Notes
Conditions: 150 mM KOAc, 10 mM MgCl2 and 150 mM bicine (pH 8.5), 24 C. The record gives the reactivity of an RNA of 177 nucleotides to 2A3 and DMS. For DMS the reverse transcriptase was MarathonRT. The data come from the RNA Mapping Database (RMDB), library OK2TST. In probing experiments dimethyl sulfate is read out at A N1 and C N3, which are open when not base-paired.
RNA sequence: GGGAACGACUCGAGUAGAGUCGAAAAGAAUAACCAGUUUAAACUUAGAACCGACUGACAUCAGUUGUACACCCUCGGUCCAGCCUGGGAUCACACGGUUUAGAGGGAAAGUCGCAGGCUCGCCACAACCCAUAAAUCAGUUCGCUGAUUUAUGGGUAAAAGAAACAACAACAACAAC
Reactivity to 2A3 in 0.01 (KOAc 150mM, MgCl2 10mM, bicine 150mM(pH8.5), 24C), signal-to-noise 2, nucleotides 027 to 126: g030a020a060u120a090a050c040c020a010g000u000u050u160a080a060a020c010u030u080a020g050a130a100c050c040g020a000c030u030g040a030c010a110u110c010a020g020u040u040g080u100a010c030a110c050c010c030u100c070g020g000u060c030c030a000g030c000c020u030g000g060g000a000u090c020a030c010a000c080g030g070u140u190u140a140g090a100g090g000g000a000a090a000g020u020c030g000c150a000g000g050c010u010c020g030c000c010a080c020a050
Reactivity to DMS in 0.01 (KOAc 150mM, MgCl2 10mM, bicine 150mM(pH8.5), 24C), signal-to-noise 4, nucleotides 027 to 126: g000a100a120u000a070a090c060c110a130g020u020u000u010a040a080a250c050u000u000a090g040a110a110c120c020g030a060c040u000g010a090c120a120u020c040a050g000u000u000g010u000a090c230a110c010c010c000u000c100g000g000u000c020c080a060g020c020c020u000g000g000g010a030u010c050a210c130a070c070g010g010u020u000u000a110g000a100g000g010g000a050a080a120g010u010c030g010c020a040g000g000c010u000c080g020c020c030a080c210a090